[RMDB]
RNA sequence: GGGAACGACUCGAGUAGAGUCGAAAACGUGCGUACUGGGCCGCCGGCACAAUGUUCGACCCAGCCGUCUCAGAGGACGCGGUUCGACCACGAUCAGCCAGCAGGUCAGCGGGGUCCUCCUAGCUAGCCGUAGUCGACGAUUCGUCGUCGACUACGGAAAAGAAACAACAACAACAAC
Reactivity to DMS in 0.01 (KOAc 150mM, MgCl2 10mM, bicine 150mM(pH8.5), 24C), signal-to-noise 1, nucleotides 027 to 126: c120g010u000g030c050g000u030a070c060u010g010g000g020c020c020g000c090c020g030g040c050a110c070a140a100u010g000u000u000c030g000a070c040c020c010a080g000c220c040g000u000c030u000c130a200g020a160g000g000a010c030g050c070g040g000u010u000c110g000a050c080c030a090c040g020a090u030c110a120g010c000c020a050g000c050a050g010g000u010c050a040g000c010g020g000g000g030u010c010c050u010c030c040u000a060g010c060u000a050g020